[RMDB]
RNA sequence: GGGAACGACUCGAGUAGAGUCGAAAAUGAUGUGCGUCUAUUGGACUGCGAAGCGGUCUGUGGUAACCGGCCUAUCCACAUGAUAGGUUUGUGCUAUGAGGCCGGAAAUAGCACGUGCACAUCUAAAGGGUUCGACGUGCUUCGGUACGUCGAACCCAAAAGAAACAACAACAACAAC
Reactivity to 2A3 in 0.01 (KOAc 150mM, MgCl2 10mM, bicine 150mM(pH8.5), 24C), signal-to-noise 1, nucleotides 027 to 126: u120g010a000u000g000u000g000c000g000u040c070u030a150u050u060g120g000a030c030u000g090c090g050a020a020g040c000g000g000u000c010u020g060u050g000g000u000a080a080c000c000g020g000c000c000u050a090u080c050c020a100c060a300u300g010a010u020a020g010g000u000u130u000g000u000g000c000u000a000u060g200a010g030g000c000c000g000g000a000a000a000u090a000g000c070a000c000g000u040g030c000a000c000a000u090c000u000a020a090a040
This 177-nucleotide RNA was probed chemically with 2A3.